[RMDB]
RNA sequence: GGGAACGACUCGAGUAGAGUCGAAAAUCACGGCAUUAUCGCCAGCGGUGCUGCCGUGAUGCGGUCUUCGCAAGGACCGCAACAUGAAGGUACGAUGCUUUUGUGUCGUGCUUCUUGUUUCUGGCACAGAAACUGAAAACUUCGGUUUUCAGUUUCUAAAAGAAACAACAACAACAAC
Reactivity to DMS in 0.01 (KOAc 150mM, MgCl2 10mM, bicine 150mM(pH8.5), 24C), signal-to-noise 2, nucleotides 027 to 126: u000c000a000c000g000g000c010a030u000u000a030u000c030g000c100c230a170g000c080g020g010u000g000c140u000g000c000c000g000u000g000a020u000g010c020g010g000u000c010u010u020c260g000c280a160a140g020g000a030c010c000g000c000a030a030c230a030u010g030a080a040g030g000u000a040c000g000a020u000g000c000u000u000u000u010g040u000g000u000c030g020u000g000c000u000u000c070u000u000g010u000u000u000c010u000g000g060c180a170c300
Reactivity to 2A3 in 0.01 (KOAc 150mM, MgCl2 10mM, bicine 150mM(pH8.5), 24C), signal-to-noise 3, nucleotides 027 to 126: u000c000a000c010g000g000c000a020u020u070a020u080c000g050c100c090a030g140c050g050g000u030g010c000u000g000c010c000g010u010g000a000u030g010c000g000g000u020c020u140u120c140g050c190a120a110g030g000a000c000c020g020c000a000a010c050a080u210g080a100a020g030g020u030a000c010g000a020u020g000c050u120u250u260u300g040u020g010u000c000g000u000g000c000u050u030c000u010u010g000u000u010u000c010u020g030g000c090a030c010